The record gives the reactivity of an RNA of 177 nucleotides to DMS and 2A3. The 2A3 profile rests on 4,224 reads. For 2A3 the reverse transcriptase was SuperScript II with manganese. Reactivities are given for positions 27 through 126.
RNA sequence: GGGAACGACUCGAGUAGAGUCGAAAAGGUGCCAUGGGCGCAACAGCUGGAGAUGGAGUCGCUGGGCAAGGUCGCCGGCCAUGACGGCUCGCCGGCCGGCGUUCCCACCGGCCCCGUGGUCUGGGGACCUCGCAUAUAUGUUCGCAUAUAUGCGAGGAAAAGAAACAACAACAACAAC
Reactivity to DMS in 0.01 (KOAc 150mM, MgCl2 10mM, bicine 150mM(pH8.5), 24C), signal-to-noise 3, nucleotides 027 to 126: g010g020u000g010c030c020a090u000g020g010g010c110g020c060a090a070c110a110g010c040u000g000g020a090g010a110u010g000g000a120g020u000c040g020c080u000g020g010g010c150a060a060g010g010u000c050g000c010c030g000g000c010c030a060u000g010a070c090g010g000c080u010c100g020c070c030g000g000c030c030g010g000c020g010u010u010c000c000c010a270c070c030g020g000c000c020c040c020g020u010g000g010u000c050u000g000g000g000g000a230
Reactivity to 2A3 in 0.01 (KOAc 150mM, MgCl2 10mM, bicine 150mM(pH8.5), 24C), signal-to-noise 3, nucleotides 027 to 126: g050g020u040g060c010c010a050u130g060g040g000c110g000c080a100a120c030a120g070c030u060g000g030a170g010a120u090g070g010a040g050u050c020g030c030u080g020g060g010c060a070a060g060g020u070c040g020c080c000g000g020c020c000a060u120g080a060c070g030g050c040u040c050g060c010c000g010g000c010c010g030g000c000g010u020u010c000c000c000a010c000c000g040g000c010c010c010c030g010u050g010g010u040c070u080g060g000g000g000a030